The record gives the reactivity of an RNA of 177 nucleotides to 2A3 and DMS.
The data come from the RNA Mapping Database (RMDB), library M2PK50.
The 2A3 profile rests on 5,764 reads.
Conditions: 150 mM KOAc, 10 mM MgCl2 and 150 mM bicine (pH 8.5), 24 C.
RNA sequence: GGGAACGACUCGAGUAGAGUCGAAAACUCUGAGUCUUCGGACUCAGAGAAACGCUUUCGACUCUGAUACCAACAAACGCGAGUUUGUUGGUAUAUUCGCAAAAAGGUGGGAGUUCGCUCCCACCAAUCUACUGUACAUGUUCGCAUGUACAGUAGAAAAAGAAACAACAACAACAAC
Reactivity to 2A3 in 0.01 (KOAc 150mM, MgCl2 10mM, bicine 150mM(pH8.5), 24C), signal-to-noise 2, nucleotides 027 to 126: c000u010c000u000g010a000g000u000c000u030u130c250g080g010a010c010u010c000a000g010a000g000a010a010a010c130g030c090u010u010u010c000g000a000c000u010c000u020g020a000u000a000c010c010a000a010c010a000a000a000c010g030c020g040a040g060u000u000u000g000u000u010g000g000u000a010u000a010u000u000c000g000c050a030a050a070a040a160g000g010u010g000g010g000a010g010u060u080c180g060c050u000c000c000c010a000c000c000a020a000
Reactivity to DMS in 0.01 (KOAc 150mM, MgCl2 10mM, bicine 150mM(pH8.5), 24C), signal-to-noise 5, nucleotides 027 to 126: c000u000c010u010g010a020g010u000c000u000u020c190g040g000a020c000u000c000a000g000a000g000a020a040a050c300g000c240u000u000u000c010g010a010c000u000c000u010g000a040u000a000c000c010a000a000c000a000a000a000c000g010c300g000a210g020u000u000u000g000u000u000g000g000u000a000u000a010u000u000c030g000c260a060a060a040a060a040g000g010u000g000g010g010a020g010u000u010c220g000c000u000c000c000c000a000c020c010a010a020